[RMDB]
Conditions: 150 mM KOAc, 10 mM MgCl2 and 150 mM bicine (pH 8.5), 24 C. Structure probing data (DMS) for a 177-nucleotide construct. Values cover nucleotides 27 to 126.

RNA sequence: GGGAACGACUCGAGUAGAGUCGAAAACAUAACGCUGGAGACAUCCUGGAAGGGGAAAGAGGAUGGAGGGAAAAGAAGGGGCGGGCCCCCCGAUCCGAAUGGCCCGACUGCCAGGAUUGGAAAGCACCACUAUGAUUUGGUUCGCCAAAUCAUAGUGAAAAGAAACAACAACAACAAC
Reactivity to DMS in 0.01 (KOAc 150mM, MgCl2 10mM, bicine 150mM(pH8.5), 24C), signal-to-noise 2, nucleotides 027 to 126: c080a130u020a080a080c230g000c020u000g020g020a300g010a120c150a020u000c000c010u010g000g030a060a070g000g000g000g000a260a030a050g000a190g000g000a040u000g020g020a120g010g030g000a070a010a090a130g010a040a070g010g000g000g060c070g010g000g000c000c000c000c000c000c000g000a050u000c070c030g000a100a150u030g010g020c000c030c030g020a100c070u000g000c010c010a040g000g010a010u000u000g000g000a190a070a050g000c070a070c160
For DMS the reverse transcriptase was MarathonRT.